[RMDB]
RNA sequence: GGGAACGACUCGAGUAGAGUCGAAAAGAAAGAAAGAAAGAAAGUCAUUUAUUCAGCAUUGGGACAUAACAUUAACUUAAAAUUUAAAUAUUGAAGAUGCUUUAAUUAAAGUUAAAGACUAGCAAAAUGUAUUUUAUCGUUUCGACGAUAAAAUACAAAAAGAAACAACAACAACAAC
Reactivity to DMS in 0.01 (KOAc 150mM, MgCl2 10mM, bicine 150mM(pH8.5), 24C), signal-to-noise 1, nucleotides 027 to 126: g000a060a050a120g000a110a110a210g000a010a070a040g050a090a140a020g000u010c020a100u010u010u010a050u060u010c140a020g020c010a020u000u000g010g000g000a150c100a040u000a090a150c070a110u000u000a030a070c000u000u000a020a020a020a050u130u000u060a000a020a080u100a020u010u000g000a080a110g000a030u000g000c020u000u000u070a000a070u000u000a040a070a130g000u000u000a010a020a120g020a010c020u000a020g010c180a010a040a090a200
Reactivity to 2A3 in 0.01 (KOAc 150mM, MgCl2 10mM, bicine 150mM(pH8.5), 24C), signal-to-noise 1, nucleotides 027 to 126: g070a070a030a000g010a090a130a000g090a090a130a000g020a090a210a000g020u000c000a020u030u020u230a120u070u100c020a010g000c000a000u000u000g040g040g000a010c000a090u110a000a020c000a040u040u040a080a000c160u050u030a100a020a010a190u120u160u110a010a230a020u300a160u060u000g000a000a000g000a040u100g010c000u010u080u070a060a000u050u200a140a080a020g000u000u060a060a080a000g020a040c040u020a010g000c120a120a020a020a020